The data come from the RNA Mapping Database (RMDB), library VIROID. The record gives the reactivity of an RNA of 177 nucleotides to DMS and 2A3. The 2A3 profile rests on 3,214 reads. 2A3 is a SHAPE reagent: it acylates the 2'-hydroxyl of flexible nucleotides of all four kinds.
RNA sequence: GGGAACGACUCGAGUAGAGUCGAAAACGGUGGCGAAGUUGAGCUCUGCUCUUCUAAGCUGUAACCGGACCGGUCCCCUUCACCCGAGCGCUGCUUGCCGCUAGUCGCGCGGACUUCCAAGUCUCCCCAUACUACUGUCGUUCGCGACAGUAGUAUGAAAAGAAACAACAACAACAAC
Reactivity to DMS in 0.01 (KOAc 150mM, MgCl2 10mM, bicine 150mM(pH8.5), 24C), signal-to-noise 4, nucleotides 027 to 126: c020g020g020u000g000g010c010g000a240a080g010u000u000g000a020g010c010u010c210u010g020c000u000c000u000u000c010u010a020a300g000c010u000g020u010a100a050c020c010g030g010a080c060c040g010g000u000c030c010c030c080u000u010c030a060c060c020c060g000a130g010c070g020c040u000g020c020u010u010g010c050c040g010c050u000a060g010u010c140g010c090g010c040g010g010a080c050u000u010c080c060a040a140g010u000c050u000c010c010c030
Reactivity to 2A3 in 0.01 (KOAc 150mM, MgCl2 10mM, bicine 150mM(pH8.5), 24C), signal-to-noise 2, nucleotides 027 to 126: c020g020g030u050g000g000c010g010a070a020g030u010u020g000a020g000c020u060c190u300g020c010u000c030u120u010c020u020a050a000g000c020u010g070u080a050a050c020c030g000g030a020c020c050g030g060u070c000c000c000c040u020u120c030a060c000c030c020g050a030g040c050g020c040u040g020c030u040u110g020c020c020g000c040u050a030g040u090c030g000c010g010c000g020g030a040c010u080u000c050c020a070a000g040u020c020u010c030c010c010